[RMDB]
RNA sequence: GGGAACGACUCGAGUAGAGUCGAAAAUGUGCCGCCGGACGGUGGCGACCGCGAGACGUUGGGGAGCGUCGGUGACCGGCCGCCUCCGGAAUGCCGGACCGCAGCCCAGGGACUGCGACCGUGCGCUUACCCCCUGGCUCUUCGGAGCCAGGGGGUAAAAAGAAACAACAACAACAAC
Reactivity to 2A3 in 0.01 (KOAc 150mM, MgCl2 10mM, bicine 150mM(pH8.5), 24C), signal-to-noise 1, nucleotides 027 to 126: u110g010u090g010c000c030g060c010c000g010g040a060c010g080g000u010g000g010c020g000a040c000c020g000c010g000a010g000a000c010g020u220u090g090g040g000g060a060g000c000g000u010c000g040g210u000g010a030c030c020g030g000c000c000g010c020c000u010c030c010g000g010a050a010u140g040c000c000g010g000a030c000c080g000c000a030g000c000c010c060a000g020g030g050a130c000u010g000c010g000a010c000c030g060u130g040c050g000c000u000
Reactivity to DMS in 0.01 (KOAc 150mM, MgCl2 10mM, bicine 150mM(pH8.5), 24C), signal-to-noise 1, nucleotides 027 to 126: u040g000u050g000c000c100g000c030c000g050g040a110c000g010g000u000g010g000c000g000a030c020c050g040c020g010a000g010a000c010g020u000u040g000g010g040g000a100g020c010g080u000c030g000g020u110g090a000c300c000g000g010c070c000g030c000c000u000c050c010g000g020a040a070u000g000c050c000g000g000a200c290c030g040c070a000g000c130c010c010a100g010g000g000a300c080u000g000c000g000a140c300c200g000u020g000c000g050c140u000
An RNA of 177 nucleotides, treated with 2A3 and DMS and read out base by base. The DMS profile rests on 854 reads. DMS adducts were read by reverse transcription with MarathonRT. It was measured as part of the RMDB library RFM100. The 2A3 profile rests on 823 reads.